[RMDB]
RNA sequence: GGGAACGACUCGAGUAGAGUCGAAAACGGGGUUGGCUAUAGUUGAUUUCGAACCGUAUGCUUAUGUAUAUGGAAUGAUUUGUACGCUUUACGCAUGUGUACACUCACUCUCAGUUCACUCUUGUGAGAGAAGGGAGAGAGAGAUAUUUUGCGAUUAGUAUUGUUGGAUCUUCGGAUUCGGCAAUGCAAAAGAAACAACAACAACAAC
Reactivity to DMS in 0.01 (KOAc 150mM, MgCl2 10mM, bicine 150mM(pH8.5), 24C), signal-to-noise 2, nucleotides 027 to 156: c050g020g020g080g030u010u020g020g020c050u000a080u000a090g030u000u000g010a150u000u000u000c050g000a100a300c010c010g010u000a050u010g010c050u030u010a120u010g030u000a040u000a040u020g000g020a100a110u000g010a090u010u010u000g040u010a060c070g050c060u000u000u010a150c080g000c020a070u000g030u000g040u000a030c000a150c070u000c000a210c000u000c000u000c000a090g000u000u000c020a120c050u010c020u010u000g030u010g000a070g020a050g010a070a100g000g010g000a030g010a060g000a050g020a040g010a070u000a040u000u000u000u000g010c010g000a200u000u010a130
Reactivity to 2A3 in 0.01 (KOAc 150mM, MgCl2 10mM, bicine 150mM(pH8.5), 24C), signal-to-noise 1, nucleotides 027 to 156: c040g010g000g000g000u030u020g000g000c050u040a000u010a080g000u010u020g030a180u030u010u010c020g000a020a010c000c000g000u000a000u000g010c020u150u050a070u140g010u000a000u000a010u040g000g040a070a020u030g030a020u050u010u030g020u000a000c010g000c000u030u030u030a030c020g000c000a000u020g000u000g010u010a000c020a010c020u000c000a010c000u000c000u000c010a040g050u010u030c020a010c010u020c000u100u160g050u090g090a020g000a000g000a020a020g050g000g000a000g000a010g000a000g000a000g000a010u010a060u030u080u070u080g000c000g000a010u020u040a050
Structure probing data (DMS and 2A3) for a 207-nucleotide construct.
For DMS, 3,702 sequencing reads were counted.
For DMS the reverse transcriptase was MarathonRT.
For 2A3 the reverse transcriptase was SuperScript II with manganese.